Chemical mapping of a 177-nucleotide RNA with DMS and 2A3.
For 2A3 the reverse transcriptase was SuperScript II with manganese.
The reactions ran in a buffer of 150 mM KOAc, 10 mM MgCl2 and 150 mM bicine (pH 8.5), at 24 C.
[RMDB]
RNA sequence: GGGAACGACUCGAGUAGAGUCGAAAAGCUCGUCGCGAACACCGGUCUGCGAGGUCAUCCUUGCCAUGUUCUCACCAAGGGCGUACCGUUCCAAUAUCAGUGAAAUAACAAUGUUAUAGGAGAUCGGACGAGGUUGAAAAUUCGUUUUCAACCUCGUAAAAGAAACAACAACAACAAC
Reactivity to DMS in 0.01 (KOAc 150mM, MgCl2 10mM, bicine 150mM(pH8.5), 24C), signal-to-noise 3, nucleotides 027 to 126: g010c010u000c020g020u010c060g030c020g030a120a110c060a190c070c020g000g020u010c030u010g000c060g020a080g030g010u010c080a090u010c020c010u000u000g000c050c100a080u000g010u000u000c020u000c020a120c170c040a050a070g010g000g010c040g040u010a070c020c030g000u000u010c030c020a080a060u000a020u000c100a050g010u000g000a060a070a110u000a060a110c080a100a090u010g000u000u000a050u000a100g000g000a080g010a040u010c020g010g000
Reactivity to 2A3 in 0.01 (KOAc 150mM, MgCl2 10mM, bicine 150mM(pH8.5), 24C), signal-to-noise 2, nucleotides 027 to 126: g020c020u040c060g050u070c040g000c040g040a110a020c050a030c020c010g000g020u000c000u060g010c010g050a030g020g030u080c030a050u080c000c000u010u050g000c050c020a070u120g010u020u020c050u030c000a060c070c010a020a060g040g000g010c000g020u020a040c020c020g030u080u020c000c000a030a010u060a040u120c030a000g080u020g170a080a060a110u200a070a070c080a080a080u140g020u110u030a070u030a080g040g030a040g020a060u090c000g000g030